[RMDB]
An RNA of 177 nucleotides, treated with 2A3 and DMS and read out base by base.
It was measured as part of the RMDB library OK2TST.
The DMS profile rests on 7,195 reads.
For 2A3 the reverse transcriptase was SuperScript II with manganese.
The RNA was probed in 150 mM KOAc, 10 mM MgCl2 and 150 mM bicine (pH 8.5) at 24 C.
RNA sequence: GGGAACGACUCGAGUAGAGUCGAAAAGAGCAUGGCAGAGGAGCUCCGGCUUGGGAGGCAGUCACGAGCAGCCCUCACUGACCUGAUUACAAAAGCCGCAGGGUCAUCAAAGGACUAUACCCAAGGGAUUACUUAUGCCUUUCGAGGCAUAAGUAAUAAAAGAAACAACAACAACAAC
Reactivity to 2A3 in 0.01 (KOAc 150mM, MgCl2 10mM, bicine 150mM(pH8.5), 24C), signal-to-noise 3, nucleotides 027 to 126: g050a020g000c060a060u080g030g000c030a010g020a030g040g010a030g010c000u030c020c020g030g020c030u050u080g050g010g000a020g010g010c010a020g040u050c020a000c110g030a030g010c040a020g010c010c000c000u010c010a040c030u040g020a070c010c020u040g030a080u090u190a050c070a020a170a030a010g040c010c010g020c050a020g040g000g050u040c020a020u040c010a030a120a020g040g000a010c010u040a040u070a120c010c000c010a020a020g080g000g020
Reactivity to DMS in 0.01 (KOAc 150mM, MgCl2 10mM, bicine 150mM(pH8.5), 24C), signal-to-noise 6, nucleotides 027 to 126: g000a090g020c040a060u010g010g010c040a090g010a110g010g010a110g000c050u000c060c080g020g000c050u000u010g010g010g010a070g010g010c080a050g000u010c070a050c140g000a080g010c080a090g000c070c040c010u010c070a100c130u000g000a070c030c010u000g010a080u010u000a120c140a050a060a080a090g010c030c040g010c110a090g000g010g010u000c030a040u000c080a060a110a090g010g000a060c050u010a100u010a100c010c010c020a070a100g000g010g020